[RMDB]
RNA sequence: GGGAACGACUCGAGUAGAGUCGAAAAUUAGGCAAGUGUUGUGUGCCCUGUGUUUAAGUACUGGUGGUUCCGUCCACUGGUGCACUCGCUUGGCACCUAAGCAGUGUUCCGUCAUUGCUUAGUGUGGCGAAUGCAUAGUCUUCGGACUAUGCAUUCGAAAAGAAACAACAACAACAAC
Reactivity to DMS in 0.01 (KOAc 150mM, MgCl2 10mM, bicine 150mM(pH8.5), 24C), signal-to-noise 2, nucleotides 027 to 126: u000u010a110g010g010c050a080a100g030u000g000u000u000g010u010g010u000g000c020c010c040u000g030u010g010u000u000u000a040a060g020u000a000c010u000g000g030u000g010g010u000u010c300c210g010u000c010c000a020c000u000g000g030u000g000c000a050c000u000c020g020c020u000u010g000g000c010a010c030c000u000a020a020g000c010a010g020u010g010u000u010c210c130g000u010c010a000u000u010g000c010u000u000a000g000u000g010u010g010g020
Reactivity to 2A3 in 0.01 (KOAc 150mM, MgCl2 10mM, bicine 150mM(pH8.5), 24C), signal-to-noise 2, nucleotides 027 to 126: u110u040a060g020g100c130a090a040g090u020g060u210u040g010u020g020u010g000c000c020c020u050g020u000g030u030u010u070a150a040g010u010a010c010u030g010g000u000g040g030u110u300c070c040g060u040c030c010a000c000u010g000g010u010g020c000a000c000u040c000g040c010u000u030g000g020c000a000c000c000u000a000a000g020c000a000g000u020g000u260u300c050c040g120u150c020a000u020u000g000c000u010u000a050g010u050g020u030g130g050